RNA sequence: GGGAACGACUCGAGUAGAGUCGAAAACUGGCUGCUGUUUCCUUAGUGCGUUGAACAACCGGCUCAGAACUGGAGCGGACAAGGGGAAUCCGACUGUUUAAUUAAAACAAAGCAUUGUGAUGGCCGGGACCUUGAACUCUUUCGAGAGUUCAAGGUCAAAAGAAACAACAACAACAAC
Reactivity to 2A3 in 0.01 (KOAc 150mM, MgCl2 10mM, bicine 150mM(pH8.5), 24C), signal-to-noise 2, nucleotides 027 to 126: c020u030g030g020c080u090g000c020u070g090u000u050u010c030c000u070u060a050g020u030g070c110g060u000u050g110a120a040c030a060a140c040c020g040g000c070u020c180a040g020a080a000c020u020g010g070a010g060c000g000g030a050c080a220a270g090g000g000g000a020a090u000c000c000g000a020c090u020g000u080u020u000a130a150u130u130a060a010a000a080c110a060a170a000g040c030a030u180u030g000u000g000a050u000g000g030c020c000g010g010
Reactivity to DMS in 0.01 (KOAc 150mM, MgCl2 10mM, bicine 150mM(pH8.5), 24C), signal-to-noise 1, nucleotides 027 to 126: c000u000g020g000c000u010g010c000u000g000u000u010u030c030c000u010u000a100g000u000g000c010g080u000u030g000a060a160c060a070a300c000c040g000g000c000u120c180a000g010a200a060c060u080g040g000a150g000c080g000g000a030c080a090a010g010g000g000g000a260a060u000c000c000g000a000c230u000g010u000u000u000a060a180u030u040a070a100a040a090c180a090a200a160g000c060a010u000u000g000u030g100a200u000g000g000c000c000g050g030
Structure probing data (2A3 and DMS) for a 177-nucleotide construct.
DMS adducts were read by reverse transcription with MarathonRT.
The DMS profile rests on 805 reads.
The 2A3 profile rests on 776 reads.
For 2A3 the reverse transcriptase was SuperScript II with manganese.
Source: RMDB library RFM100, as collected in RNAgym.